Structure probing data (DMS and 2A3) for a 177-nucleotide construct. High 2A3 reactivity points to a flexible backbone, as in loops and unpaired stretches.

RNA sequence: GGGAACGACUCGAGUAGAGUCGAAAACUGCGUCAGGCUCCCGCCAGCCGCCGUCGUCGUCACGGUGAGUGUCGGGCACGCCACGUCGCUCCACCACAGCGUGCUGCUCACCGACACCGUCGGGGUCACCACUCAGUCGAUUCGUCGACUGAGUGGUAAAAGAAACAACAACAACAAC
Reactivity to DMS in 0.01 (KOAc 150mM, MgCl2 10mM, bicine 150mM(pH8.5), 24C), signal-to-noise 2, nucleotides 027 to 126: c120u000g010c000g020u010c070a050g010g000c020u010c000c010c000g000c060c050a060g000c000c050g040c010c020g050u000c060g010u020c140g030u010c100a210c060g020g000u000g000a070g030u090g000u040c050g000g000g040c060a010c080g000c000c040a110c180g000u000c060g000c000u000c000c040a110c120c040a160c140a070g000c020g000u010g020c000u000g050c030u000c040a090c080c050g020a080c030a080c120c080g000u010c000g040g050g020g040u000c160
Reactivity to 2A3 in 0.01 (KOAc 150mM, MgCl2 10mM, bicine 150mM(pH8.5), 24C), signal-to-noise 4, nucleotides 027 to 126: c030u050g020c010g080u050c060a060g030g070c030u020c020c020c000g020c010c030a060g020c010c010g060c020c010g040u040c030g050u040c030g050u090c040a010c060g010g000u030g020a160g010u050g120u130c070g000g040g000c060a030c060g000c000c010a090c060g060u070c040g020c030u040c020c010a080c020c030a050c010a010g010c010g050u020g000c020u060g010c010u000c030a040c000c010g010a040c020a050c060c070g020u040c010g010g010g010g000u010c060